[RMDB]
RNA sequence: GGGAACGACUCGAGUAGAGUCGAAAAAAGCAGUUCGCUGCUUGCUUAUCCUAAGUCAACGACGAAUUGUCUUUGUCAGCUGGGCCAUCGGAAACGAUGGUUAGCUUGGAUUUAAGACAACUAUCGUUGAUAUGGAGACUGUCAGGUUCGCCUGAAAGUCCCUCAGUACGUUCGCGUACUGAGGGACAAAAGAAACAACAACAACAAC
Reactivity to 2A3 in 0.01 (KOAc 150mM, MgCl2 10mM, bicine 150mM(pH8.5), 24C), signal-to-noise 2, nucleotides 027 to 156: a000a000g060c090a050g030u180u180c260g050c120u010g050c010u020u050g050c040u110u160a040u060c000c000u050a110a050g040u000c000a000a000c000g040a000c130g150a300a300u000u000g000u010c000u010u020u020g010u000c000a000g000c000u090g000g220g050c000c000a020u010c000g000g010a090a130a090c010g000a010u000g000g020u000u000a000g010c010u080u100g120g000a040u190u220u110a000a000g010a000c000a010a020c060u020a010u020c000g000u000u000g000a000u000a060u020g000g010a010g010a070c110u090g100u120c010a000g000g110u020u110c280g140c120c000u000g010a030a000a040